[RMDB]
RNA sequence: GGGAACGACUCGAGUAGAGUCGAAAACCUGUUAUCUGACCAAUAACAGAAUGCACCACAGCGUGAAAUCAUCUGAUUGGGUGAGUUGGUCGCACCGCCAUUUGACGAACGAACGCCAAGCCUAAGCACUACGAGUAUGUGUUCGCACAUACUCGAAGAGGUAGCCAUUGUUCGCAAUGGCUACCUCAAAAGAAACAACAACAACAAC
Reactivity to 2A3 in 0.01 (KOAc 150mM, MgCl2 10mM, bicine 150mM(pH8.5), 24C), signal-to-noise 1, nucleotides 027 to 156: c000c010u000g000u000u000a000u000c000u000g000a000c000c000a000a000u000a010a000c000a010g010a110a040u060g110c020a090c040c000a060c060a020g000c040g060u020g040a010a130a030u120c030a000u020c020u100g140a200u120u150g150g000g000u050g000a000g000u020u030g020g020u000c000g040c000a030c000c020g030c000c000a090u050u030u160g070a050c000g050a070a010c000g060a050a010c060g060c030c050a090a000g000c000c020u090a030a020g100c070a020c110u150a070c070g000a000g020u000a000u000g020u000g000u000u050c120g120c020a000c000a000u010a000c000u000c000g000a010a020
Chemical mapping of a 207-nucleotide RNA with 2A3. The RNA was probed in 150 mM KOAc, 10 mM MgCl2 and 150 mM bicine (pH 8.5) at 24 C.